RNA sequence: GGGAACGACUCGAGUAGAGUCGAAAAGGUACCACAUGGGGUUUCGGGCACUGACUACACACCCACAGUACUAGAACAUUUUGUUGUAAGACCACAUCGGGUUACUCAGCCAGAUCCUCUCCGUGAGCGUGAACAGUCAGUUCGCUGACUGUUCACGAAAAGAAACAACAACAACAAC
Reactivity to 2A3 in 0.01 (KOAc 150mM, MgCl2 10mM, bicine 150mM(pH8.5), 24C), signal-to-noise 3, nucleotides 027 to 126: g110g020u100a070c000c000a040c050a090u220g000g040g060g000u030u060u080c010g020g010g070c070a020c120u020g040a070c060u140a090c050a010c000a050c020c040c000a050c000a010g050u090a020c060u060a060g120a110a080c070a170u120u100u010u150g020u010u010g050u070a140a000g050a040c000c030a030c040a130u130c100g000g000g030u030u020a050c050u020c020a020g000c020c020a020g010a040u000c000c000u020c010u000c020c010g080u060g080a040g050
Reactivity to DMS in 0.01 (KOAc 150mM, MgCl2 10mM, bicine 150mM(pH8.5), 24C), signal-to-noise 2, nucleotides 027 to 126: g000g070u040a110c050c040a130c110a140u000g000g000g010g010u000u000u030c010g000g000g040c080a030c080u000g020a030c140u000a160c060a040c170a140c070c020c000a090c080a060g000u000a140c130u070a040g000a110a070c080a100u030u020u000u010g000u000u000g000u000a020a120g020a090c010c110a010c060a120u000c170g000g000g000u000u000a020c110u000c030a100g010c000c030a000g010a140u000c020c000u000c000u030c000c040g030u050g030a080g000
Notes: This 177-nucleotide RNA was probed chemically with 2A3 and DMS. It was measured as part of the RMDB library OK1LIB. DMS (dimethyl sulfate) methylates the pairing face of unpaired adenines and cytosines.